[RMDB]
RNA sequence: GGGAACGACUCGAGUAGAGUCGAAAACCAGGAUAGUUCGCUAUCCUGGAAAAAAGAUAUGGAAAUGACCGUAGCAACAGCUGUAGUCGGAAACGACUACAGACAUGCUAAUCGGUAUUUCCUAAGUCAAAAAUAGUGGUACUUCGGUACCACUAAAGUUAUUGGUAAUGUUCGCAUUACCAAUAACAAAAGAAACAACAACAACAAC
Reactivity to 2A3 in 0.01 (KOAc 150mM, MgCl2 10mM, bicine 150mM(pH8.5), 24C), signal-to-noise 4, nucleotides 027 to 156: c000c000a000g000g000a000u000a000g030u070u070c260g020c140u000a000u000c000c000u000g010g050a070a010a000a010a000a030g060a030u070a040u080g010g020a010a000a010u080g100a140c000c010g000u050a020g040c040a020a140c040a160g050c010u000g000u010a000g000u000c000g010g000a020a040a040c000g000a000c000u000a000c000a000g020a050c010a010u060g010c020u050a080a140u120c000g000g000u010a000u000u000u000c000c000u000a060a020g030u020c020a010a020a040a070a100u070a030g010u020g000g010u000a000c010u020u040c300g070g000u000a000c000c000a000c000u010a020a000a000
Reactivity to DMS in 0.01 (KOAc 150mM, MgCl2 10mM, bicine 150mM(pH8.5), 24C), signal-to-noise 1, nucleotides 027 to 156: c000c000a020g000g020a020u010a010g030u000u020c290g050c020u000a000u000c000c000u000g000g000a000a050a030a040a100a100g000a130u000a250u000g000g010a030a000a000u000g000a020c020c000g070u000a130g040c010a050a080c110a190g000c000u010g040u000a010g000u000c020g030g000a150a140a240c000g010a000c000u000a000c000a020g000a020c050a180u010g000c000u000a100a050u000c010g010g050u010a020u000u000u010c000c000u000a060a100g040u000c000a060a040a070a090a180u010a020g020u000g000g010u010a000c000u000u000c300g070g040u000a000c040c020a000c010u010a000a010a070